RNA sequence: GGGAACGACUCGAGUAGAGUCGAAAACAGGCGUGAAGCUGGUGGAAAUGGACAUGAGCCUUCUCGUUGAUGCUGGAAACAAGCUGCUGCCUGACGUCCUCUUCUACACCUAUGAGAUGCCCAGGGAGUCAAACACGUCGUUCGCGACGUGUUUGACAAAAGAAACAACAACAACAAC
Reactivity to 2A3 in 0.01 (KOAc 150mM, MgCl2 10mM, bicine 150mM(pH8.5), 24C), signal-to-noise 1, nucleotides 027 to 126: c020a010g000g030c040g060u060g030a000a030g020c040u040g030g060u080g050g090a130a100a120u140g070g000a000c050a090u050g040a020g050c000c000u120u070c050u010c040g090u010u110g070a130u120g080c050u000g000g030a040a100a050c050a020a000g050c020u020g000c030u030g000c000c000u020g000a020c010g000u000c000c000u010c030u120u000c040u040a050c080a090c000c010u040a090u150g120a120g040a080u150g060c010c000c020a040g000g020g030a020
Reactivity to DMS in 0.01 (KOAc 150mM, MgCl2 10mM, bicine 150mM(pH8.5), 24C), signal-to-noise 2, nucleotides 027 to 126: c060a050g000g010c030g040u010g000a130a060g000c040u000g020g050u000g030g000a160a120a070u000g000g000a100c050a060u010g000a140g010c160c100u010u000c040u000c090g010u000u000g000a090u000g000c040u000g040g020a240a120a100c090a060a030g000c080u000g000c070u000g000c020c000u010g000a130c150g000u000c040c020u000c060u020u000c020u000a080c090a030c020c040u000a070u000g000a090g000a080u030g020c000c010c030a080g010g000g010a100

The record gives the reactivity of an RNA of 177 nucleotides to 2A3 and DMS. 2A3 adducts were read by reverse transcription with SuperScript II with manganese. The reactions ran in a buffer of 150 mM KOAc, 10 mM MgCl2 and 150 mM bicine (pH 8.5), at 24 C. DMS adducts were read by reverse transcription with MarathonRT.